[RMDB]
RNA sequence: GGGAACGACUCGAGUAGAGUCGAAAACAAGGAUGUCGGGGCGAAGCUUGACGUUGCCGGGCUUGUAGACGCCAUGCACGUUGCCGAACGUCGCGGCCAGCAGGUAUUUGCCGUGCUCACCGGCGCCCGAUCGUAUGCGGUUCGCCGCAUACGAUCGAAAAGAAACAACAACAACAAC
Reactivity to DMS in 0.01 (KOAc 150mM, MgCl2 10mM, bicine 150mM(pH8.5), 24C), signal-to-noise 1, nucleotides 027 to 126: c100a200a180g000g000a040u010g000u030c030g000g050g000g000c000g000a110a040g040c030u020u020g000a060c070g080u010u030g060c010c040g000g000g000c070u010u010g010u040a040g000a100c030g000c030c030a050u060g040c080a060c040g050u050u000g000c040c000g000a050a140c040g000u010c000g010c010g000g000c050c140a140g000c050a090g000g000u000a030u020u030u040g050c030c010g030u000g000c070u000c040a100c210c000g030g030c040g000c120c070
Reactivity to 2A3 in 0.01 (KOAc 150mM, MgCl2 10mM, bicine 150mM(pH8.5), 24C), signal-to-noise 3, nucleotides 027 to 126: c020a040a050g140g070a200u070g020u050c010g010g000g000g030c020g090a090a010g070c040u050u060g050a010c010g070u070u070g020c020c020g000g020g000c020u070u080g040u060a050g030a130c060g030c040c050a030u100g020c060a020c060g080u060u130g040c050c020g030a050a030c050g010u030c000g000c000g050g020c000c000a020g030c010a010g020g140u150a240u160u110u070g010c000c030g060u050g020c010u000c010a030c040c010g000g010c010g000c000c010
Source: RMDB library OK1LIB, as collected in RNAgym. Chemical mapping of a 177-nucleotide RNA with DMS and 2A3. For DMS the reverse transcriptase was MarathonRT. Values cover nucleotides 27 to 126.